This 207-nucleotide RNA was probed chemically with 2A3 and DMS.
[RMDB]
RNA sequence: GGGAACGACUCGAGUAGAGUCGAAAACUAAGCUUCGGCUUAGAAACCGCGUACUACUUUCGCUAACAGGCGAGGAUCUGAGUAGAUGGUCCCAAAUAGGACCAUCGAAAGGGGAGCCUGGACCCGAAAGUAUCGCACCAGACCAGUUCGCUGGUAACAGGGAAUACUAAUUCGUUAGUAUUCCCUGAAAAGAAACAACAACAACAAC
Reactivity to 2A3 in 0.01 (KOAc 150mM, MgCl2 10mM, bicine 150mM(pH8.5), 24C), signal-to-noise 6, nucleotides 027 to 156: c000u000a000a000g010c010u040u190c300g130g000c000u000u020a020g050a090a040a010c030c050g000c010g030u050a140c040u000a000c000u030u010u000c000g010c020u030a190a020c000a010g010g010c000g050a300g010g020a000u010c010u050g000a010g000u000a000g000a000u000g010g000u020c020c020c020a240a290a030u300a080g000g000a000c000c000a000u000c000g010a000a000a000g000g000g000g000a000g000c000c000u000g000g000a000c000c010c000g000a000a000a000g000u000a000u230c000g000c010a020c010c030a030g070a060c030c010a030g050u080u100c130g100c060u010g030g000u100a060a040
Reactivity to DMS in 0.01 (KOAc 150mM, MgCl2 10mM, bicine 150mM(pH8.5), 24C), signal-to-noise 3, nucleotides 027 to 156: c020u000a030a000g000c010u000u020c280g030g000c000u020u000a020g000a080a100a090c050c050g020c100g020u000a120c090u000a060c010u000u020u010c000g030c010u010a160a300c020a040g010g000c020g000a110g050g010a060u010c000u020g010a130g010u000a180g000a010u010g000g020u000c000c000c010a050a160a250u000a050g020g000a040c000c000a010u010c000g010a070a230a300g000g000g000g000a090g020c010c010u000g000g000a060c260c200c000g020a040a010a070g010u000a020u000c050g010c010a090c010c030a090g010a110c020c010a240g000u010u000c090g020c010u000g010g000u000a060a230
Source: RMDB library RNAMAK, as collected in RNAgym.